[RMDB]
RNA sequence: GGGAACGACUCGAGUAGAGUCGAAAACACUAUGUAACUGGGCACUAGAGAGUCCUCGCCGAUUGUCUGCUUGACCAGCUCCUCGGCCGUUUGGACGAUCAGCAAGGACAUGGCUCUUAGCAGACGAGAUUACUGGCCAUUUCGAUGGCCAGUAAUCAAAAGAAACAACAACAACAAC
Reactivity to DMS in 0.01 (KOAc 150mM, MgCl2 10mM, bicine 150mM(pH8.5), 24C), signal-to-noise 1, nucleotides 027 to 126: c050a110c090u010a040u040g020u010a100a100c110u000g030g000g010c080a070c100u000a060g020a120g020a180g000u000c030c020u010c040g010c040c000g000a050u020u000g000u000c000u000g020c100u020u000g000a060c040c000a150g000c130u010c050c050u020c080g020g000c010c040g030u000u000u010g010g000a030c000g020a030u000c020a060g030c070a140a010g000g000a020c030a080u000g020g020c070u000c030u000u000a170g050c000a070g000a060c040g020a190
Reactivity to 2A3 in 0.01 (KOAc 150mM, MgCl2 10mM, bicine 150mM(pH8.5), 24C), signal-to-noise 1, nucleotides 027 to 126: c030a030c050u130a090u270g060u080a170a050c080u090g010g020g020c020a050c180u090a020g020a010g010a020g110u000c000c030u020c030g030c030c020g000a040u020u080g000u020c000u000g000c010u050u070g000a050c010c000a020g000c050u040c020c020u060c050g010g000c000c000g080u020u140u100g050g000a000c010g010a030u030c010a010g000c030a010a020g010g020a020c020a050u060g090g020c020u000c000u110u080a040g030c030a010g040a090c030g050a040